Structure probing data (DMS) for a 177-nucleotide construct. The DMS profile rests on 993 reads. Conditions: 150 mM KOAc, 10 mM MgCl2 and 150 mM bicine (pH 8.5), 24 C. It was measured as part of the RMDB library OK2TST.
RNA sequence: GGGAACGACUCGAGUAGAGUCGAAAACGAAGAACCUGAGAUAGCGCGCCACUUCCUUCGGAUCGCCUGUCGCUUUUUGCGGAUUGUCGGAAAGCUUGACCGCCGGAUGGCCAUUGGCGUCCGUUAAUGAUUUACGAGCUUUCGAGCUCGUAAAUCAAAAAGAAACAACAACAACAAC
Reactivity to DMS in 0.01 (KOAc 150mM, MgCl2 10mM, bicine 150mM(pH8.5), 24C), signal-to-noise 1, nucleotides 027 to 126: c080g000a070a100g000a120a120c050c020u000g000a110g000a090u020a060g000c050g020c020g030c030c030a100c110u000u010c010c080u000u010c010g000g000a100u000c090g040c070c000u000g000u000c130g000c040u000u000u000u000u000g000c020g000g010a180u000u020g040u000c030g010g000a090a140a100g020c030u000u010g020a110c080c140g010c130c000g000g000a110u000g020g010c090c060a140u000u000g020g000c000g010u000c010c000g020u000u000a040a130